[RMDB]
RNA sequence: GGGAACGACUCGAGUAGAGUCGAAAACGGGGUUCUGCGAACCAUGUGACUGGUUGCUACCGCGGCGCGGUCAUGACCUGUUGGUUUUUCGAACCCUGGGAUAUGUGGAUCAUUAUGGUCGCGCUGCGUGUAUUAUAAAUUUCGAUUUAUAAUACACAAAAGAAACAACAACAACAAC
Reactivity to 2A3 in 0.01 (KOAc 150mM, MgCl2 10mM, bicine 150mM(pH8.5), 24C), signal-to-noise 9, nucleotides 027 to 126: c000g000g000g000g000u010u000c010u060g020c030g030a000a000c000c000a020u090g060u050g140a050c060u030g010g020u030u040g010c020u050a050c010c040g000c030g120g010c080g000c000g000g010u010c010a020u030g050a040c010c020u040g110u080u060g030g010u010u010u000u040u090c020g010a000a000c000c000c000u000g010g000g020a060u050a050u190g090u080g090g030a070u070c030a050u090u210a040u160g010g000u010c000g000c000g000c040u030g010c010
Reactivity to DMS in 0.01 (KOAc 150mM, MgCl2 10mM, bicine 150mM(pH8.5), 24C), signal-to-noise 9, nucleotides 027 to 126: c020g000g000g000g010u000u000c010u000g020c150g010a020a020c010c010a070u030g020u040g010a110c120u010g000g000u000u010g010c150u020a060c060c040g020c010g010g020c100g010c000g010g000u000c050a020u010g010a050c040c020u020g000u020u010g010g000u000u000u000u020u030c300g000a000a010c000c000c010u000g000g010g000a110u030a020u010g020u010g010g000a060u010c050a120u020u030a080u010g000g000u000c000g010c050g000c020u000g000c140
Chemical mapping of a 177-nucleotide RNA with 2A3 and DMS. The reactions ran in a buffer of 150 mM KOAc, 10 mM MgCl2 and 150 mM bicine (pH 8.5), at 24 C. The DMS profile rests on 70,336 reads. For 2A3, 26,299 sequencing reads were counted.